[RMDB]
Source information:
This 177-nucleotide RNA was probed chemically with 2A3 and DMS. The reactions ran in a buffer of 150 mM KOAc, 10 mM MgCl2 and 150 mM bicine (pH 8.5), at 24 C. For DMS, 736 sequencing reads were counted. Values cover nucleotides 27 to 126.
RNA sequence: GGGAACGACUCGAGUAGAGUCGAAAAUACUUGCGAUGGUCUACGACCAACUGGAGAUACUUUGCAGAAAAGUGCCUUCGCUCCACAUAGGUCUCUAACCCAUGCUUUGAAGAAUCCUUGCAAUAGAGACCGUUAGGUGUUUCGACACCUAACGGUCAAAAGAAACAACAACAACAAC
Reactivity to 2A3 in 0.01 (KOAc 150mM, MgCl2 10mM, bicine 150mM(pH8.5), 24C), signal-to-noise 1, nucleotides 027 to 126: u100a010c040u020u050g010c120g110a050u040g020g020u020c020u090a050c080g020a030c010c020a090a090c030u000g000g010a020g020a000u030a080c030u090u030u060g000c020a030g300a290a090a020a000g070u060g030c000c010u060u130c020g060c030u010c000c000a070c030a080u130a010g070g030u000c050u030c030u080a020a070c000c000c000a010u020g000c070u040u140u090g120a070a050g030a050a030u070c030c000u050u090g000c010a070a070u080a100g110a020
Reactivity to DMS in 0.01 (KOAc 150mM, MgCl2 10mM, bicine 150mM(pH8.5), 24C), signal-to-noise 2, nucleotides 027 to 126: u010a040c070u000u000g030c100g010a110u030g000g000u000c010u010a120c220g000a060c020c000a070a130c290u000g010g000a060g010a080u020a010c010u000u000u000g010c220a200g010a130a000a030a050g010u000g040c210c100u000u000c080g030c030u000c010c020a020c100a090u010a140g030g030u000c010u010c110u000a040a050c110c000c080a130u050g000c030u000u000u010g000a070a090g020a060a130u000c060c010u010u050g010c080a130a080u010a060g010a180